[RMDB]
RNA sequence: GGGAACGACUCGAGUAGAGUCGAAAAGAUAUGGACGUCUGGAUAUCGCAUAAUGUAUCGGAAACGAUACAAGAUGAACUACGAUACAGACGUCCUAAGUCAAAAGGGAUGGCUUCGGCCAUCCCAACGUUUACACUACGUUCGCGUAGUGUAAACGAAAAGAAACAACAACAACAAC
Reactivity to 2A3 in 0.01 (KOAc 150mM, MgCl2 10mM, bicine 150mM(pH8.5), 24C), signal-to-noise 3, nucleotides 027 to 126: g010a000u040a020u050g000g000a010c000g020u000c010u020g050g080a150u080a010u230c080g050c210a010u010a070a050u070g000u010a000u000c000g000g000a040a000a010c000g000a000u010a010c000a000a010g060a000u080g040a090a100c160u300a130c300g010a000u020a020c010a010g000a000c010g000u000c000c000u000a000a000g000u000c000a000a000a060a100g000g000g020a010u000g000g000c010u090u160c300g070g000c000c000a000u010c000c000c000a000a000
Reactivity to DMS in 0.01 (KOAc 150mM, MgCl2 10mM, bicine 150mM(pH8.5), 24C), signal-to-noise 3, nucleotides 027 to 126: g000a040u000a300u000g010g010a010c000g010u000c000u000g000g020a200u000a010u010c020g010c010a020u000a070a110u000g020u000a000u000c000g000g000a130a060a180c000g010a000u000a000c020a020a040g010a080u000g000a110a130c140u010a300c040g010a020u000a020c000a020g010a010c000g000u000c000c000u000a010a060g000u000c030a060a050a070a110g000g020g010a010u000g000g000c000u010u010c200g020g020c000c000a000u000c000c010c020a000a010

The record gives the reactivity of an RNA of 177 nucleotides to 2A3 and DMS. Reactivities are given for positions 27 through 126. As a SHAPE reagent, 2A3 marks flexible, mostly unpaired nucleotides at the ribose 2'-OH.